[RMDB]
RNA sequence: GGGAACGACUCGAGUAGAGUCGAAAAGAAGUGGCAGGGACAUGCCCCAGAAGCUCGUUCUAGCAACAUAUGUUUGGCUAGUUCGAGCGAUUAGUCUAGAGGAGCGUCCUCUCGCCUCUUAACGAGACAGCUGAUUAUCGUUCGCGAUAAUCAGCUGAAAAGAAACAACAACAACAAC
Reactivity to DMS in 0.01 (KOAc 150mM, MgCl2 10mM, bicine 150mM(pH8.5), 24C), signal-to-noise 1, nucleotides 027 to 126: g000a030a060g000u000g010g020c040a090g000g020g000a020c040a030u020g050c000c000c000c000a040g020a010a120g000c000u050c000g010u000u000c020u040a000g000c010a000a080c000a240u060a210u050g000u050u060u050g010g000c000u000a000g000u020u000c020g000a000g010c000g000a030u070u000a040g000u000c000u020a040g020a260g000g000a170g000c110g000u000c000c010u000c040u010c070g000c000c000u000c000u000u020a080a020c000g020a050g030a190
Reactivity to 2A3 in 0.01 (KOAc 150mM, MgCl2 10mM, bicine 150mM(pH8.5), 24C), signal-to-noise 3, nucleotides 027 to 126: g160a040a000g030u020g020g010c000a000g000g000g000a000c070a130u300g000c010c000c000c000a030g000a050a000g030c010u000c000g000u000u000c000u000a010g010c000a040a080c030a190u300a130u290g080u150u070u070g140g040c000u010a020g000u000u000c020g000a000g000c000g000a000u010u070a000g070u000c030u050a070g030a160g050g000a040g060c000g020u000c030c020u100c000u010c080g010c000c000u000c020u010u020a090a000c050g010a030g030a050

Source: RMDB library OK1LIB, as collected in RNAgym. This 177-nucleotide RNA was probed chemically with DMS and 2A3. Values cover nucleotides 27 to 126.